[RMDB]
RNA sequence: GGGAACGACUCGAGUAGAGUCGAAAAUGUCGACGAGGUCUUCCAGAUGCAGUCGGAGGCACGGGCCGAGGCCGCAACAUUAGUUUCUGCGGCUAGGGAUGAGGCGGAAGCGGUCCGAACGCAGAAGACGGCGUAUAUGGUUCGCCAUAUACGCCGUAAAAGAAACAACAACAACAAC
Reactivity to 2A3 in 0.01 (KOAc 150mM, MgCl2 10mM, bicine 150mM(pH8.5), 24C), signal-to-noise 1, nucleotides 027 to 126: u170g020u010c020g020a010c030g020a080g020g170u000c010u080u060c070c020a030g010a080u160g000c050a020g050u050c010g000g070a030g020g040c030a020c130g010g000g030c020c000g020a050g040g040c010c010g000c000a010a040c000a040u100u100a050g080u060u090u150c070u070g020c030g080g000c010u000a000g050g010g030a050u100g020a010g030g090c040g030g020a030a010g040c000g010g000u000c010c000g020a100a010c110g000c070a030g030a130a010g040
Reactivity to DMS in 0.01 (KOAc 150mM, MgCl2 10mM, bicine 150mM(pH8.5), 24C), signal-to-noise 2, nucleotides 027 to 126: u000g020u000c040g000a080c020g050a110g010g000u010c060u000u020c050c040a130g010a100u010g020c070a160g000u020c010g010g000a160g000g010c070a140c050g010g000g000c010c000g010a090g020g020c010c000g000c010a050a060c090a100u000u000a050g020u010u000u010c090u000g000c040g000g000c040u000a060g000g020g000a100u000g020a110g020g020c030g000g000a070a090g010c040g000g010u000c010c010g000a070a040c150g000c040a090g020a120a170g000
The record gives the reactivity of an RNA of 177 nucleotides to 2A3 and DMS. The reactions ran in a buffer of 150 mM KOAc, 10 mM MgCl2 and 150 mM bicine (pH 8.5), at 24 C. For DMS, 1,639 sequencing reads were counted. Values are in units of 0.01, from 0 to 300, in steps of 10. Reactivities are given for positions 27 through 126.